[RMDB]
This 207-nucleotide RNA was probed chemically with 2A3.
RNA sequence: GGGAACGACUCGAGUAGAGUCGAAAACGCAAAGCUGCAGCGCGGCGCUCUGGAGGCCUUGCCCCGCGCACUGCUCUUUACAUGGCCCGACGUGAGGGCACUUCGCGGGCAGUGCUGCGGCCUCGGGAAACUGCCCCUAAGUUCGCUUAGGGGCAAACUAGUUUCCGAGGUUCGCCUCGGAAACUAGAAAAGAAACAACAACAACAAC
Reactivity to 2A3 in 0.01 (KOAc 150mM, MgCl2 10mM, bicine 150mM(pH8.5), 24C), signal-to-noise 2, nucleotides 027 to 156: c030g000c040a030a110a090g030c020u140g010c030a100g080c010g010c010g140g080c050g000c020u030c050u160g160g030a030g000g040c050c050u040u080g050c010c010c000c010g000c000g030c000a000c000u030g010c000u000c030u090u220u190a090c020a080u100g020g000c000c020c010g020a100c090g090u130g070a140g000g000g040c040a110c020u090u100c070g010c060g040g010g000c000a010g000u000g000c050u070g010c000g010g000c010c010u010c000g000g000g000a040a080a000c060u050g010c000c000c000c000u000a000a000g020u030u160c210g010c130u000u000a030g000g000g000g010c000a000a000a000